An RNA of 207 nucleotides, treated with DMS and 2A3 and read out base by base. For 2A3 the reverse transcriptase was SuperScript II with manganese.

[RMDB]
RNA sequence: GGGAACGACUCGAGUAGAGUCGAAAAGAGGUCAAAGUUGGCAAAACCAGUGUAUGGUGAACAUAAUGGAGUGGCAGAAUGUGGUGCAUCAGGAGUUAAUCCAAACUGGCGGGAUUCCGAAAUCUCUGUCUUUCCACCACCUCAGUAAGUGCCACAAACGAUUAUAUCGGUUCGCCGAUAUAAUCGUAAAAGAAACAACAACAACAAC
Reactivity to DMS in 0.01 (KOAc 150mM, MgCl2 10mM, bicine 150mM(pH8.5), 24C), signal-to-noise 2, nucleotides 027 to 156: g000a070g010g030u000c040a070a090a150g020u020u000g020g020c050a090a100a120a110c010c030a070g040u020g010u000a040u000g010g030u010g000a080a120c060a070u000a050a120u010g040g010a130g040u000g020g000c040a110g010a070a070u010g020u010g020g040u000g000c060a090u000c120a140g020g010a040g000u000u000a080a140u000c040c010a060a090a060c050u000g000g030c010g000g020g020a060u000u000c060c200g000a050a050a040u000c000u000c020u030g030u010c040u000u000u000c020c000a100c060c020a010c010c080u000c060a080g000u010a070a120g010u000g000c020c020a010c030a020a100
Reactivity to 2A3 in 0.01 (KOAc 150mM, MgCl2 10mM, bicine 150mM(pH8.5), 24C), signal-to-noise 3, nucleotides 027 to 156: g040a030g020g010u060c070a080a030a050g020u070u030g030g010c010a050a040a010a060c010c000a020g000u030g020u120a090u060g040g030u040g020a080a010c030a060u140a110a050u150g090g000a080g030u010g000g000c010a020g050a150a030u100g050u040g040g010u040g010c040a050u070c060a110g010g030a030g010u100u160a040a050u000c010c010a080a010a030c010u020g020g000c020g010g010g040a000u100u100c160c050g060a180a140a090u030c050u000c030u070g020u010c020u020u070u010c020c000a000c000c000a020c010c010u050c010a010g020u070a130a010g080u010g060c000c020a020c000a010a120

The 2A3 profile rests on 1,887 reads.